[RMDB]
RNA sequence: GGGAACGACUCGAGUAGAGUCGAAAAGGUUGAGACGGCGAGCACAGCCCUCGGGGCAAUCCUGGCAGGUCGCAAUGCGGUGGUGCCGCCACGGUGUCCACGUCGAGGCGCCGGCCUUGUGGUACCGCAACAGGAAAAUUUUCGAAUUUUCCUGUUGAAAAGAAACAACAACAACAAC
Reactivity to 2A3 in 0.01 (KOAc 150mM, MgCl2 10mM, bicine 150mM(pH8.5), 24C), signal-to-noise 4, nucleotides 027 to 126: g070g000u060u100g040a030g020a100c090g010g020c030g010a060g030c040a010c010a080g030c010c000c010u050c060g040g000g010g000c050a050a100u130c000c010u030g050g000c050a050g030g060u100c050g000c080a050a090u160g020c040g070g030u080g040g010u020g010c020c010g000c020c000a030c030g000g000u030g010u030c010c010a050c050g210u150c080g050a090g010g010c030g000c050c040g030g000c000c000u030u100g030u030g040g010u020a020c000c020g000
Reactivity to DMS in 0.01 (KOAc 150mM, MgCl2 10mM, bicine 150mM(pH8.5), 24C), signal-to-noise 9, nucleotides 027 to 126: g010g010u010u000g000a140g010a110c120g010g000c020g010a110g020c070a070c080a190g010c030c010c020u000c120g010g010g010g010c080a080a060u000c050c030u000g000g020c070a100g020g010u000c060g020c050a070a050u010g010c150g020g010u000g020g020u000g000c010c010g010c030c080a080c040g010g010u000g010u000c010c010a080c110g010u010c150g000a110g010g000c020g010c040c040g010g010c020c020u000u000g010u000g010g010u000a070c010c020g000